[RMDB]
Source: RMDB library PDB130, as collected in RNAgym. The record gives the reactivity of an RNA of 207 nucleotides to 2A3. 2A3 adducts were read by reverse transcription with SuperScript II with manganese. The reactions ran in a buffer of 150 mM KOAc, 10 mM MgCl2 and 150 mM bicine (pH 8.5), at 24 C.

RNA sequence: GGGAACGACUCGAGUAGAGUCGAAAACUUAGAAGCAGCUACCCUCUAAGAAAAGCGUAACAGCUUACCGGCCGAGGUUUGAGGCGCCCAAAAUGAUCGGGACUCAAAUCCACCACCGAGACCUGUCCGUACCACUCAUACUGGUAAUCGAGUAGAUUACUUAGAGAAGCUUCGGCUUCUCUAAGUAAAAAGAAACAACAACAACAAC
Reactivity to 2A3 in 0.01 (KOAc 150mM, MgCl2 10mM, bicine 150mM(pH8.5), 24C), signal-to-noise 2, nucleotides 027 to 156: c020u060u050a020g000a080a010g030c070a000g030c010u010a020c000c020c000u000c010u040a010a050g030a090a190a030a000g020c010g050u060a060a010c010a040g010c020u030u060a030c000c040g000g030c090c090g080a120g000g040u010u000u000g000a000g050g050c150g210c050c000c010a040a100a050a090u260g070a090u150c100g000g000g020a030c010u010c010a020a030a020u000c020c020a020c030c000a010c010c060g000a010g030a070c000c000u020g060u000c020c010g030u040a020c000c000a020c010u020c020a050u050a100c030u040g050g000u030a070a100u090c040g000a000g040u030a040g050a130u030